Background:
Structure probing data (DMS and 2A3) for a 177-nucleotide construct. 2A3 adducts were read by reverse transcription with SuperScript II with manganese. It was measured as part of the RMDB library RFM100. For DMS the reverse transcriptase was MarathonRT.
RNA sequence: GGGAACGACUCGAGUAGAGUCGAAAAGGUCAUGAGUGCCAGCGCGAAACCCCGGUUUGCUGGCCGGCAACCCUCCUCUCGCGGCGGGGUGCCCCGGGUGACGACCAGGCCGCACGCCGACCGGCGGCCUCAUCCGGGAUUUCGAUCCCGGAUGAGGAAAAGAAACAACAACAACAAC
Reactivity to DMS in 0.01 (KOAc 150mM, MgCl2 10mM, bicine 150mM(pH8.5), 24C), signal-to-noise 2, nucleotides 027 to 126: g010g000u000c000a170u020g000a030g010u030g000c000c020a040g010c000g040c200g020a020a030a080c030c020c000c030g010g000u010u030u000g010c000u000g020g030c000c000g010g000c000a060a060c000c000c010u000c090c000u020c110u080c230g030c200g000g000c200g020g000g000g030u000g000c000c000c010c010g000g010g000u040g010a160c210g000a010c040c000a110g000g020c000c010g000c050a110c070g000c000c050g000a130c140c060g010g020c000g000g000
Reactivity to 2A3 in 0.01 (KOAc 150mM, MgCl2 10mM, bicine 150mM(pH8.5), 24C), signal-to-noise 5, nucleotides 027 to 126: g020g000u020c000a020u080g020a020g020u210g010c000c010a000g000c020g000c080g100a040a030a040c000c000c000c010g020g020u100u140u080g000c000u000g010g000c000c000g000g000c000a040a070c000c000c000u020c010c010u130c030u100c120g060c080g050g000c090g010g000g000g000u010g000c000c010c000c000g020g000g030u080g040a040c060g000a010c000c000a010g020g040c020c020g030c030a080c070g090c050c020g040a100c010c040g030g000c000g010g010